This 207-nucleotide RNA was probed chemically with 2A3. It was measured as part of the RMDB library OK3TST. The reactions ran in a buffer of 150 mM KOAc, 10 mM MgCl2 and 150 mM bicine (pH 8.5), at 24 C. For 2A3 the reverse transcriptase was SuperScript II with manganese.
RNA sequence: GGGAACGACUCGAGUAGAGUCGAAAAUACAUAUAAAGAAUUAUACAAAUGCAUACCAACGAGUGGAAUACAAUGGAUGCAGUUGUAUUAGCCGCCGGCGAGGGAACCCGGCUUCGACCGCUGACUGAUGACAAGCCCAAAGGAAUGGUCGAGGUCGGCGUAUGUAGCAAUUCGUUGCUACAUACGCAAAAGAAACAACAACAACAAC
Reactivity to 2A3 in 0.01 (KOAc 150mM, MgCl2 10mM, bicine 150mM(pH8.5), 24C), signal-to-noise 1, nucleotides 027 to 156: u080a000c010a010u280a000u200a300a220a000g140a170a090u290u080a060u000a070c000a000a030a070u010g020c000a010u020a300c000c030a040a010c020g070a030g020u120g010g300a070a070u100a120c070a090a120u060g000g000a000u050g020c030a000g010u000u040g020u000a040u080u060a010g080c090c020g110c190c180g060g000c050g020a030g020g040g000a000a030c060c000c000g000g010c010u000u020c010g000a000c000c000g020c030u100g220a050c070u070g040a080u020g020a180c040a090a050g080c020c030c020a020a040a020g090g000a050a030u020g000g000u000c010g000a000g000g000u000c000g000